Source: RMDB library OK3TST, as collected in RNAgym. Structure probing data (DMS and 2A3) for a 207-nucleotide construct.

RNA sequence: GGGAACGACUCGAGUAGAGUCGAAAACAAAGUCUCUUCUGUGUCAGAAGACAAAGAAGUACCAACCGACCACGUUCCGGCGGAAAAGGUCAUCAGUGGCGUAGUCAUUGAGCGUAAAGCAGGUCUCGGAAGCAAGAUCCGGGAAACGUUCAUGGGCCUAACCGUAUAGCUUCGGCUAUACGGUUAGAAAAGAAACAACAACAACAAC
Reactivity to DMS in 0.01 (KOAc 150mM, MgCl2 10mM, bicine 150mM(pH8.5), 24C), signal-to-noise 2, nucleotides 027 to 156: c070a070a140a190g030u000c060u000c010u010u000c010u000g010u000g010u000c040a060g030a120a240g010a040c030a030a010a020g010a050a030g000u000a120c040c050a110a100c020c010g000a070c010c000a080c050g050u000u010c020c020g000g000c060g030g000a040a040a070a050g010g020u000c020a120u010c060a120g010u010g020g000c020g000u000a090g010u010c030a100u010u000g000a030g000c010g020u000a020a060a110g020c080a080g000g030u010c000u000c000g020g020a050a180g030c110a060a160g000a060u000c000c020g000g010g000a020a050a010c020g050u000u000c000a030u000g000g030g020c070
Reactivity to 2A3 in 0.01 (KOAc 150mM, MgCl2 10mM, bicine 150mM(pH8.5), 24C), signal-to-noise 4, nucleotides 027 to 156: c040a010a130a020g060u010c040u030c000u060u020c030u020g110u020g040u050c010a080g050a300a050g030a200c030a010a100a010g060a040a000g010u040a020c000c010a040a010c030c020g110a130c000c020a030c060g070u130u100c030c040g030g000c000g020g000a030a060a010a030g040g000u010c020a090u050c060a070g050u040g060g010c080g040u070a000g040u040c020a050u070u090g000a010g000c010g030u120a100a110a030g060c060a070g060g100u020c000u000c000g000g030a050a010g070c080a050a020g060a220u000c000c020g020g000g000a060a050a000c020g010u000u040c020a040u080g040g030g010c010